The record gives the reactivity of an RNA of 177 nucleotides to 2A3. The RNA was probed in 150 mM KOAc, 10 mM MgCl2 and 150 mM bicine (pH 8.5) at 24 C.
[RMDB]
RNA sequence: GGGAACGACUCGAGUAGAGUCGAAAAGGGUGACGACAGAAAAGCUACCCCAGGGAUAACAGAGUUGUCCCCGGCGAGAGUACAUAUCGACCCGGGGGCUUGCUACCUCGAUGUCGGCUCUCCCCAUCCUGUGUCCUUCCUUCGGGAAGGACACAGGAAAAGAAACAACAACAACAAC
Reactivity to 2A3 in 0.01 (KOAc 150mM, MgCl2 10mM, bicine 150mM(pH8.5), 24C), signal-to-noise 1, nucleotides 027 to 126: g020g000g000u020g050a020c010g000a000c030a080g260a110a140a020a000g070c000u040a030c000c000c000c000a030g000g060g000a110u040a170a000c030a040g100a010g090u070u030g060u050c000c000c000c000g000g000c010g000a020g020a000g030u120a050c070a280u280a090u020c000g010a020c030c010c000g000g000g000g000g010c000u000u170g000c000u070a030c040c000u000c020g050a050u140g050u010c000g000g050c010u000c000u020c020c010c000c000a040u040